[RMDB]
RNA sequence: GGGAACGACUCGAGUAGAGUCGAAAACGGGCAUACCGGGGUCUCAGAUUCCCGUAAAACACUGAAUUCAAAUAGUCGCAAACGACGAAACUUACGCUUUAGCCGCUUAAGGCUAGCCGUUGCAGCAGUCGGUCAAUGGGCUGUGUGGUGAAAGCCAGGCUUUUAUAUCCUUCGGGAUAUAAAAGCCAAAAGAAACAACAACAACAAC
Reactivity to 2A3 in 0.01 (KOAc 150mM, MgCl2 10mM, bicine 150mM(pH8.5), 24C), signal-to-noise 1, nucleotides 027 to 156: c010g010g060g000c040a060u040a190c000c070g000g000g000g040u020c020u010c060a010g050a080u050u220c000c000c000g130u150a020a020a020a020c060a010c010u070g000a090a100u200u070c040a070a050a150u060a170g030u020c040g060c130a050a220a130c060g000a030c040g060a040a020a080c020u130u090a040c050g000c010u210u040u050a000g030c010c000g060c080u180u070a150a020g000g000c000u000a000g010c000c000g000u030u060g000c000a030g000c000a000g000u010c000g110g020u080c110a050a270u160g020g020g000c000u010g040u020g080u000g080g000u050g030a020a000a030g010c010c020a010

Chemical mapping of a 207-nucleotide RNA with 2A3.
The reactions ran in a buffer of 150 mM KOAc, 10 mM MgCl2 and 150 mM bicine (pH 8.5), at 24 C.